[RMDB]
RNA sequence: GGGAACGACUCGAGUAGAGUCGAAAAGGUUAUUCUGCAAGUCGCGCGGAGUGAAGGUGACGGUCAUCUCGUCUCCAGCCCUGAACGUGGCGCCAGCGCCGCCAAGGACGGCAAGGGUGGAGGUGACGCCUACACAACACUUCGGUGUUGUGUAGGCAAAAGAAACAACAACAACAAC
Reactivity to 2A3 in 0.01 (KOAc 150mM, MgCl2 10mM, bicine 150mM(pH8.5), 24C), signal-to-noise 3, nucleotides 027 to 126: g090g000u040u020a060u210u000c040u010g000c030a140a220g050u020c040g000c030g000c040g150g030a080g000u100g100a090a000g060g060u080g060a030c020g040g070u040c000a070u020c020u020c080g160u010c020u000c000c010a150g040c060c020c000u000g020a050a000c040g000u010g020g000c000g040c020c060a180g020c080g000c050c000g000c000c030a060a020g220g010a100c090g010g000c070a090a170g000g000g060u110g050g000a040g030g000u020g000a000c050
Reactivity to DMS in 0.01 (KOAc 150mM, MgCl2 10mM, bicine 150mM(pH8.5), 24C), signal-to-noise 2, nucleotides 027 to 126: g000g030u020u110a030u050u000c070u010g060c040a120a020g000u080c010g030c080g020c000g050g030a020g030u000g000a000a060g020g040u000g000a010c070g000g030u040c100a050u020c040u020c000g020u050c000u000c000c040a180g000c030c000c000u030g010a170a240c180g030u000g000g000c000g040c090c030a120g000c000g170c090c000g040c000c000a010a170g020g000a090c150g020g070c110a210a200g000g040g000u000g000g000a030g000g000u000g000a020c130

The record gives the reactivity of an RNA of 177 nucleotides to 2A3 and DMS. The data come from the RNA Mapping Database (RMDB), library OK1LIB. For 2A3, 1,365 sequencing reads were counted. For DMS, 1,626 sequencing reads were counted.